[RMDB]
Annotation:
Structure probing data (DMS and 2A3) for a 177-nucleotide construct. For 2A3, 3,355 sequencing reads were counted. The RNA was probed in 150 mM KOAc, 10 mM MgCl2 and 150 mM bicine (pH 8.5) at 24 C. The DMS profile rests on 1,662 reads.

RNA sequence: GGGAACGACUCGAGUAGAGUCGAAAAUCAGGAUUAGGUUUCGUACCUUUUACGAUCCAUACUAUGUCUCCAUACUUUAAUGGUUUAUCAAGAGGAUAUUCAACAUCAUUUACUAUUGCCUUAAAACCCUGCCUUUAGAGUUCGCUCUAAAGGCAGGAAAAGAAACAACAACAACAAC
Reactivity to DMS in 0.01 (KOAc 150mM, MgCl2 10mM, bicine 150mM(pH8.5), 24C), signal-to-noise 3, nucleotides 027 to 126: u020c120a150g030g010a070u000u000a070g030g020u000u010u000c150g010u010a060c130c050u000u010u000u010a090c090g010a070u010c010c000a100u010a100c170u000a020u010g010u000c070u000c040c040a030u000a040c120u020u000u010a080a050u010g010g000u000u000u000a050u010c080a110a110g000a100g000g010a080u000a050u000u000c110a060a050c060a030u000c040a060u000u000u000a090c060u010a110u000u000g090c020c030u000u000a080a080a070a110c250
Reactivity to 2A3 in 0.01 (KOAc 150mM, MgCl2 10mM, bicine 150mM(pH8.5), 24C), signal-to-noise 4, nucleotides 027 to 126: u080c010a030g080g010a050u020u120a020g000g050u030u050u110c130g010u090a050c010c000u050u040u040u090a070c010g040a020u000c020c000a040u040a120c040u070a050u170g040u010c020u030c030c020a030u070a190c070u140u140u150a120a070u120g060g050u020u090u100a070u120c080a090a040g040a030g180g080a040u030a070u120u130c020a030a050c000a130u080c020a030u050u090u130a060c030u020a030u100u090g080c000c000u090u110a010a080a030a050c010